This 207-nucleotide RNA was probed chemically with 2A3. It was measured as part of the RMDB library M2RFPK. The RNA was probed in 150 mM KOAc, 10 mM MgCl2 and 150 mM bicine (pH 8.5) at 24 C. For 2A3, 592 sequencing reads were counted.
RNA sequence: GGGAACGACUCGAGUAGAGUCGAAAAAAACUUUUGUGACUUGCUGAAACGGGACUAAGCUCCUCACCGAGGCUAAGCAAGUAAAAUACGCCUCUCAUAUCCUUACCUGAGGGUGGUAAGGAAAUAACCUGCAACGCUUCCUUCGGGAAGCGUUGAACUAACCGACAGUCUUCGGACUGUCGGUUAGAAAAGAAACAACAACAACAAC
Reactivity to 2A3 in 0.01 (KOAc 150mM, MgCl2 10mM, bicine 150mM(pH8.5), 24C), signal-to-noise 1, nucleotides 027 to 156: a000a000a000c240u290u250u110u110g120u070g000a010c010u010u000g000c020u100g010a090a120a060c040g000g010g020a000c010u040a250a110g050c040u000c000c000u000c050a080c100c090g010a010g020g020c020u130a040a040g010c000a030a090g020u170a000a020a000a000u070a020c050g000c020c020u020c000u000c030a070u100a040u150c030c000u000u000a000c000c000u090g000a100g030g120g000u040g050g000u000a000a000g000g130a010a010a010u030a000a020c040c080u100g000c010a000a000c000g000c000u000u030c000c010u030u040c220g090g000g010a000a000g000c000g000u000u000g000a000a000